[RMDB]
RNA sequence: GGGAACGACUCGAGUAGAGUCGAAAACUGCUUGACGUUCGCGUCAAGCAGCAUGGGUAACCACUAAAAUCCCGAAAGGGUGGGCUGUGGUGACCUUCCAGUUCUGGAUCGUCUUCGGACGAUCCAGCAGGAUUAUAGCUUUCGAGCUAUAAUCCUGAAAAGAAACAACAACAACAAC
Reactivity to DMS in 0.01 (KOAc 150mM, MgCl2 10mM, bicine 150mM(pH8.5), 24C), signal-to-noise 5, nucleotides 027 to 126: c010u000g000c010u000u000g000a010c000g010u010u010c220g020c000g020u010c000a010a010g000c000a010g010c060a090u010g010g000g000u010a160a060c000c000a010c000u000a020a030a020a060u020c000c000c000g000a120a080a140g000g000g010u000g000g010g060c300u000g010u000g010g000u000g000a030c000c000u000u010c010c020a160g010u010u000c010u000g000g000a010u000c000g010u000c000u000u020c190g030g010a020c000g010a010u000c000c000a010g010
Reactivity to 2A3 in 0.01 (KOAc 150mM, MgCl2 10mM, bicine 150mM(pH8.5), 24C), signal-to-noise 2, nucleotides 027 to 126: c010u000g020c010u000u010g000a000c000g050u020u060c300g030c010g060u010c000a000a000g000c000a000g000c020a070u100g010g000g010u000a010a000c000c000a000c010u000a020a020a010a050u090c000c000c020g020a070a010a010g030g000g000u020g000g010g020c030u030g000u000g030g010u010g000a000c000c000u020u020c020c010a070g080u210u050c000u020g010g000a000u000c000g020u010c000u050u080c240g110g000a000c000g000a000u010c000c000a010g000